Chemical mapping of a 207-nucleotide RNA with DMS. The DMS profile rests on 6,627 reads. The reactions ran in a buffer of 150 mM KOAc, 10 mM MgCl2 and 150 mM bicine (pH 8.5), at 24 C.
[RMDB]
RNA sequence: GGGAACGACUCGAGUAGAGUCGAAAACGGAGUUCGCUCCGCUAAACCCGUAGGACCCGGUGUCAGAGGUCUGAACUAUGGAUUUCGAAAGAGAUCCACGAAUUCAGACUACCCACCUGACACGGGUCCUAAACGGCCUUGGCUCAUUCGUGAGCAAUUACUAGAGUUAUUUCGAUAACUCUAGUAAAAAAGAAACAACAACAACAAC
Reactivity to DMS in 0.01 (KOAc 150mM, MgCl2 10mM, bicine 150mM(pH8.5), 24C), signal-to-noise 3, nucleotides 027 to 156: c010g010g000a020g000u000u000c300g030c010u010c010c000g000c000u000a030a130a140c030c020c000g020u000a040g010g000a010c000c010c010g030g030u000g020u020c000a030g010a170g020g000u000c000u010g010a020a050c050u000a040u000g000g010a030u000u000u000c010g010a250a180a300g010a010g010a010u000c000c010a010c000g010a050a070u000u000c000a030g010a040c000u000a010c010c020c020a300c150c010u000g000a020c000a010c020g000g000g030u010c000c000u000a000a010a050c020g030g020c080c080u000u000g020g020c000u000c000a050u000u010c210g020u000g000a020g010c000a230a160